[RMDB]
RNA sequence: GGGAACGACUCGAGUAGAGUCGAAAAGCAUCCGUGAGGAGCAGAGUGAAUCCCAGUGGUGAGCAGAUCCUUGCACAAGACUGUCACGGCAGCAGGUGUCUCACAGAACAGGUCACCAGGCUCAGGCCCCUGUACGCCUUUUCGAAGGCGUACAGGGAAAAGAAACAACAACAACAAC
Reactivity to 2A3 in 0.01 (KOAc 150mM, MgCl2 10mM, bicine 150mM(pH8.5), 24C), signal-to-noise 1, nucleotides 027 to 126: g020c020a090u020c010c010g060u070g070a140g000g070a010g010c040a000g040a070g120u140g070a100a140u100c060c050c040a010g040u030g070g000u040g030a010g000c000a010g040a260u070c010c010u100u130g030c040a070c010a130a100g130a240c040u080g030u150c070a040c170g060g000c040a030g000c030a040g000g100u010g050u000c020u020c010a090c020a030g030a080a010c020a030g050g010u000c030a000c000c000a010g020g010c020u000c010a010g100g110c000
Reactivity to DMS in 0.01 (KOAc 150mM, MgCl2 10mM, bicine 150mM(pH8.5), 24C), signal-to-noise 1, nucleotides 027 to 126: g010c070a160u000c030c030g010u000g010a270g000g010a110g000c010a090g000a130g060u000g000a040a100u020c010c000c040a070g030u000g000g030u010g000a060g040c100a230g000a170u000c030c020u000u030g060c100a060c120a080a070g010a080c090u000g030u020c170a140c130g000g020c050a040g020c000a000g010g040u010g000u000c020u000c030a020c040a090g010a070a020c070a050g050g000u020c000a060c010c070a180g010g000c010u010c050a100g050g000c110

Source: RMDB library OK2TST, as collected in RNAgym.
The record gives the reactivity of an RNA of 177 nucleotides to 2A3 and DMS.
For 2A3, 915 sequencing reads were counted.
Reactivities are given for positions 27 through 126.
Conditions: 150 mM KOAc, 10 mM MgCl2 and 150 mM bicine (pH 8.5), 24 C.